[RMDB]
RNA sequence: GGGAACGACUCGAGUAGAGUCGAAAAAACAUGUUCACCGCUAGCUCAACGUCAGAUUUGUAGCCUUUAAAGCGGACGGCAUGGCCCCAGCGCUUGGUGGUGCUGCCGUCGCGAGCGCUCCUGGACGUCUCUGUAUCCUCUUCGGAGGAUACAGAGAAAAAGAAACAACAACAACAAC
Reactivity to DMS in 0.01 (KOAc 150mM, MgCl2 10mM, bicine 150mM(pH8.5), 24C), signal-to-noise 2, nucleotides 027 to 126: a100a020c070a070u010g000u000u000c080a130c040c000g020c060u000a100g020c040u000c020a050a080c070g010u030c130a070g000a150u010u000u000g010u020a060g030c020c160u000u000u000a050a090a120g010c020g000g000a040c040g010g000c010a010u020g010g020c000c000c010c030a050g010c220g010c130u030u010g020g000u010g030g010u000g020c060u000g000c000c010g010u000c020g000c030g040a030g000c050g010c020u000c070c030u010g000g000a090c100g010
Reactivity to 2A3 in 0.01 (KOAc 150mM, MgCl2 10mM, bicine 150mM(pH8.5), 24C), signal-to-noise 2, nucleotides 027 to 126: a000a000c080a060u120g000u000u030c020a050c100c050g000c070u010a020g040c000u000c080a030a030c030g090u080c040a080g030a290u000u100u150g050u110a030g000c000c040u130u130u100a130a180a080g040c080g030g090a100c010g000g020c000a090u120g120g000c010c000c000c000a060g040c160g040c240u110u200g110g030u090g060g010u080g160c040u080g000c040c000g030u000c030g000c020g020a000g090c040g010c010u040c030c020u030g070g020a060c010g010